[RMDB]
RNA sequence: GGGAACGACUCGAGUAGAGUCGAAAAGGGGUCGCAAUGGUGAGGAUGAGGACAUGCUCUGAAGCCUCCACGGAGCAACAGCCUCAUCUACCCACCACCGAUGCGACGGAGGCACCCAAAAGGAAUUGCAUGCAACUUCGGUUGCAUGCAAUUCCAACAAUAUGACGUGGUUCGCCACGUCAUAUUGAAAAGAAACAACAACAACAAC
Reactivity to 2A3 in 0.01 (KOAc 150mM, MgCl2 10mM, bicine 150mM(pH8.5), 24C), signal-to-noise 1, nucleotides 027 to 156: g020g020g020g000u010c010g000c010a030a100u300g000g010u020g000a050g010g000a000u000g000a000g010g000a020c030a070u100g000c010u010c000u010g060a100a040g000c000c000u000c010c000a000c000g000g000a000g000c010a000a040c040a100g190c000c000u000c000a000u000c010u000a010c040c010c010a020c050c000a000c000c000g020a050u040g000c000g000a000c000g000g000a010g010g010c000a040c000c000c010a060a110a000a020g000g000a020a000u000u000g020c000a010u000g000c030a000a010c030u090u100c280g070g000u010u020g000c010a000u010g020c010a000a000u010u000c000c010a000a010
Reactivity to DMS in 0.01 (KOAc 150mM, MgCl2 10mM, bicine 150mM(pH8.5), 24C), signal-to-noise 2, nucleotides 027 to 156: g000g040g070g030u020c010g050c010a000a130u000g030g030u020g020a300g000g000a080u000g010a070g020g010a040c020a300u000g010c010u000c000u020g010a080a150g050c020c010u000c000c020a300c020g000g000a080g000c000a050a020c120a180g010c040c000u000c000a020u000c000u000a010c020c020c020a300c010c000a040c000c000g010a180u000g010c010g030a030c010g030g010a010g050g060c010a150c000c000c010a080a060a120a210g000g000a030a000u000u000g000c000a020u010g000c000a020a040c000u000u000c300g070g020u000u010g000c000a020u000g000c000a000a000u000u000c010c000a060a110
Annotation
The record gives the reactivity of an RNA of 207 nucleotides to 2A3 and DMS. Reactivities are rounded to 0.1 and cut off at 0 and 3. The 2A3 profile rests on 1,830 reads. For DMS, 3,550 sequencing reads were counted. DMS adducts were read by reverse transcription with MarathonRT.